[RMDB]
RNA sequence: GGGAACGACUCGAGUAGAGUCGAAAAGAUCUCUAACAGCACCAGUAGGCGAGAAGCUGUCGCAUACUCUUCGGAGUAUGGUCUUCGGACCGACAGCGGUGCUGUAGAAGCCUACGUGAGAUCGAAAGGGACUGUGUGCCUUCGGGUGCACAGUCCCAAAAGAAACAACAACAACAAC
Reactivity to DMS in 0.01 (KOAc 150mM, MgCl2 10mM, bicine 150mM(pH8.5), 24C), signal-to-noise 6, nucleotides 027 to 126: g000a010u010c020u010c000u010a120a030c020a000g030c010a000c010c000a100g000u010a080g010g000c000g010a300g000a030a010g000c300u080g010u030c140g020c000a000u000a010c010u000c000u000u040c170g000g000a000g000u000a010u010g000g010u040c000u000u010c030g010g010a300c000c010g000a060c160a160g030c160g000g000u000g000c000u000g000u000a040g010a080a080g000c010c000u000a070c160g000u010g000a000g000a010u000c000g020a100a080a100
Reactivity to 2A3 in 0.01 (KOAc 150mM, MgCl2 10mM, bicine 150mM(pH8.5), 24C), signal-to-noise 7, nucleotides 027 to 126: g000a000u000c000u000c010u020a070a010c000a010g000c000a010c010c000a050g070u070a080g040g040c030g010a030g020a040a030g020c180u190g090u180c030g030c180a000u000a000c000u000c010u030u120c230g120g000a000g000u010a010u010g010g000u000c000u020u010c040g020g010a030c000c000g030a010c010a010g080c080g020g010u010g020c000u000g000u000a000g000a030a010g030c010c020u080a090c050g100u070g010a010g000a000u000c000g010a080a050a030

Overview: An RNA of 177 nucleotides, treated with DMS and 2A3 and read out base by base. 2A3 adducts were read by reverse transcription with SuperScript II with manganese. It was measured as part of the RMDB library OK1LIB. The 2A3 profile rests on 7,732 reads. For DMS, 9,237 sequencing reads were counted.